This 177-nucleotide RNA was probed chemically with DMS. The reactions ran in a buffer of 150 mM KOAc, 10 mM MgCl2 and 150 mM bicine (pH 8.5), at 24 C.
RNA sequence: GGGAACGACUCGAGUAGAGUCGAAAAAGUCGUUACGACGACAAAGGAAGUUAGGCUGAGGGGCAGAGAGCGAGACUUUUCUAUUUUCCAAAAGCUCGGUCUGAGGCCCCUCAGUCUUGCUUCCUAAUGAAGGUACUGUUUUCGAACAGUACCUUCAAAAAGAAACAACAACAACAAC
Reactivity to DMS in 0.01 (KOAc 150mM, MgCl2 10mM, bicine 150mM(pH8.5), 24C), signal-to-noise 3, nucleotides 027 to 126: a100g000u000c000g000u010u010a100c170g040a050c020g020a010c020a080a090a040g010g000a020a000g020u000u000a000g000g000c000u000g000a020g000g000g000g020c010a060g010a040g020a020g010c010g000a020g000a060c000u000u000u000u000c200u040a160u030u030u030u040c220c300a020a010a010a010g010c000u000c010g000g000u010c000u000g000a110g030g000c010c000c000c000u000c000a000g010u000c000u000u000g000c000u010u000c000c000u000a010a040